[RMDB]
An RNA of 177 nucleotides, treated with DMS and 2A3 and read out base by base. For 2A3 the reverse transcriptase was SuperScript II with manganese. The DMS profile rests on 4,341 reads. In probing experiments dimethyl sulfate is read out at A N1 and C N3, which are open when not base-paired. Values cover nucleotides 27 to 126. For DMS the reverse transcriptase was MarathonRT. For 2A3, 2,965 sequencing reads were counted.
RNA sequence: GGGAACGACUCGAGUAGAGUCGAAAAAAAGAACAGCUACCACAGCUGCCAAUGCAGAAGCAGUUGCAAUUUUAGAUCGCUUCCAAGAUGCUGUUAACUUAUUCACUGCAUUAGGUGCAGGAUGGCACAUUACCCCGUCAUUCGUGACGGGGUAAUGAAAAGAAACAACAACAACAAC
Reactivity to DMS in 0.01 (KOAc 150mM, MgCl2 10mM, bicine 150mM(pH8.5), 24C), signal-to-noise 5, nucleotides 027 to 126: a030a040a080g010a090a070c070a070g020c030u010a110c110c070a120c100a110g010c020u000g010c000c050a080a060u010g020c070a060g010a120a090g000c050a030g000u000u010g010c100a100a070u000u000u000u020a120g000a060u010c160g000c070u000u000c030c050a100a080g010a060u000g010c040u000g010u000u000a070a080c120u000u000a120u000u000c110a140c010u000g000c010a040u000u000a080g030g000u000g010c040a020g000g010a060u000g010g000c110a100
Reactivity to 2A3 in 0.01 (KOAc 150mM, MgCl2 10mM, bicine 150mM(pH8.5), 24C), signal-to-noise 3, nucleotides 027 to 126: a000a000a000g070a020a000c020a000g000c000u030a020c020c040a040c040a070g020c020u000g000c010c010a070a040u090g010c010a020g040a150a020g000c020a010g000u030u040g030c050a100a090u100u080u060u090a150g020a080u030c040g030c100u100u020c040c000a060a000g050a080u070g040c040u010g020u110u050a040a030c020u080u110a050u270u130c090a060c060u000g010c000a010u020u150a080g120g000u010g010c010a000g020g090a080u100g060g000c040a000